[RMDB]
RNA sequence: GGGAACGACUCGAGUAGAGUCGAAAAAGGGCGGACCGGGGAACGCAGACCACACGAUGGUCAAGUCCUAUUUCCUAGAAAGGUCGGCUGUUUUUCGGGACCUGUUGGCUGUCCAGAACGCGGUACGCGAGACCAAUCGCUUCGGCGAUUGGUCUCGAAAAGAAACAACAACAACAAC
Reactivity to DMS in 0.01 (KOAc 150mM, MgCl2 10mM, bicine 150mM(pH8.5), 24C), signal-to-noise 1, nucleotides 027 to 126: a020g010g000g060c000g020g000a070c000c030g000g000g020g010a060a090c130g000c100a110g000a030c000c000a050c070a170c290g000a160u000g000g020u000c010a050a060g000u010c040c030u000a140u000u050u000c010c010u010a100g020a020a090a060g000g010u000c050g040g060c030u000g000u000u000u000u010u000c030g010g020g000a060c030c060u000g000u000u000g000g000c050u010g030u020c000c060a130g010a060a080c170g000c020g030g000u000a060c160g010